Chemical mapping of a 177-nucleotide RNA with DMS and 2A3.
The reactions ran in a buffer of 150 mM KOAc, 10 mM MgCl2 and 150 mM bicine (pH 8.5), at 24 C.
The data come from the RNA Mapping Database (RMDB), library OK2TRN.
DMS adducts were read by reverse transcription with MarathonRT.
2A3 is a SHAPE reagent: it acylates the 2'-hydroxyl of flexible nucleotides of all four kinds.
[RMDB]
RNA sequence: GGGAACGACUCGAGUAGAGUCGAAAACAGGCCAGCCCCGGGCAUGCGUUCUCGCCGGACACGCCGUGGCAGGCCGAGCUGGAGGACGCGUUCGGCUUCACCGAGACCGUGGACCAGCUCACCGCCAUCACACUUAUUUCUUCGGAAAUAAGUGUGAAAAAGAAACAACAACAACAAC
Reactivity to DMS in 0.01 (KOAc 150mM, MgCl2 10mM, bicine 150mM(pH8.5), 24C), signal-to-noise 6, nucleotides 027 to 126: c180a150g010g010c000c010a070g030c000c010c030c030g000g020g020c070a080u000g020c050g010u000u010c030u000c220g020c180c150g020g000a050c020a050c030g010c010c020g010u000g000g030c020a050g010g000c030c010g000a010g010c010u010g010g020a030g010g010a020c010g010c160g010u000u000c010g000g000c170u010u010c260a180c020c030g000a040g020a050c110c010g010u000g040g000a060c000c000a010g000c010u010c020a120c130c080g000c070c060a160
Reactivity to 2A3 in 0.01 (KOAc 150mM, MgCl2 10mM, bicine 150mM(pH8.5), 24C), signal-to-noise 5, nucleotides 027 to 126: c030a000g020g020c010c000a010g010c010c010c010c000g020g040g050c100a080u210g020c060g030u030u020c110u060c080g140c090c080g000g020a010c010a010c060g040c010c010g010u010g000g000c030a050g020g000c010c010g000a000g000c010u010g010g060a110g140g150a020c000g040c070g010u010u010c000g020g000c000u240u170c100a120c070c020g020a050g090a080c020c000g010u010g020g130a000c000c000a010g000c000u000c000a020c000c020g060c010c020a080